[RMDB]
Structure probing data (2A3) for a 207-nucleotide construct. 2A3 adducts were read by reverse transcription with SuperScript II with manganese.

RNA sequence: GGGAACGACUCGAGUAGAGUCGAAAAUCGGUGCUCAUGAAGCACUUGACAAACUUGGGUUCGAUGAACAGACUGAAUUUAUGACUUCACCGGAUGCACGAUUCACAUAUGAGACAUAUGUUGUCUCCGCACACAGAACACCACAGGUAUUGUAUGCCCCUUUGUCAGCAUUCGUGCUGACAAAGGGAAAAGAAACAACAACAACAAC
Reactivity to 2A3 in 0.01 (KOAc 150mM, MgCl2 10mM, bicine 150mM(pH8.5), 24C), signal-to-noise 2, nucleotides 027 to 156: u100c020g010g000u000g000c000u030c080a300u220g130a110a010g000c000a000c000u030u160g010a000c000a000a040a010c010u020u100g010g000g040u020u010c000g040a060u090g070a110a010c020a050g080a030c070u040g030a060a100u110u120u140a190u220g040a140c000u040u010c030a040c110c000g070g000a040u070g000c060a010c100g040a110u060u040c070a010c050a070u100a060u100g070a120g040a080c010a000u110a060u110g120u170u020g000u070c020u000c000c020g050c000a040c000a020c010a020g030a130a070c010a060c130c020a110c000a050g000g010u140a140u180u080g080u070a060u170g000c000

The reactions ran in a buffer of 150 mM KOAc, 10 mM MgCl2 and 150 mM bicine (pH 8.5), at 24 C.